[RMDB]
RNA sequence: GGGAACGACUCGAGUAGAGUCGAAAAACAGAGUCAAAUACUAAUCAAGACACUAAUACAACAAAAGAUGUUAUUGCUUUAAAAGAUGUUAAAACAAGCCCAGAAGAUGCUGUGAAAAAAGCUGAAGUGGUAGACAACAAUUCGUUGUUGUCUACCAAAAAGAAACAACAACAACAAC
Reactivity to 2A3 in 0.01 (KOAc 150mM, MgCl2 10mM, bicine 150mM(pH8.5), 24C), signal-to-noise 2, nucleotides 027 to 126: a000c030a090g090a040g020u000c010a000a130a000u080a050c070u110a010a100u160c090a130a000g070a000c130a000c070u000a020a110u160a190c110a080a000c050a050a270a020a020g100a040u000g010u100u030a050u010u220g040c070u210u020u130a010a070a180a020g050a020u090g060u030u110a080a070a000a110c010a000a000g050c020c000c000a010g000a090a000g040a070u110g000c000u000g040u080g070a040a000a000a000a040a000g010c040u060g010a100a000g080
Reactivity to DMS in 0.01 (KOAc 150mM, MgCl2 10mM, bicine 150mM(pH8.5), 24C), signal-to-noise 3, nucleotides 027 to 126: a090c090a060g010a080g020u000c040a070a070a060u030a120c080u040a110a080u030c080a060a070g010a090c040a050c060u030a070a080u030a050c090a090a130c100a060a040a070a050g010a060u000g000u000u010a050u030u000g000c030u020u010u020a040a030a090a020g030a070u020g030u010u000a050a040a050a090c120a040a080g000c030c000c020a060g000a020a040g010a060u000g010c030u000g000u000g020a000a080a050a070a080a030g000c020u010g020a100a070g030

Chemical mapping of a 177-nucleotide RNA with 2A3 and DMS. The data come from the RNA Mapping Database (RMDB), library OK1LIB. The reactions ran in a buffer of 150 mM KOAc, 10 mM MgCl2 and 150 mM bicine (pH 8.5), at 24 C. The 2A3 profile rests on 1,090 reads. The DMS profile rests on 4,856 reads.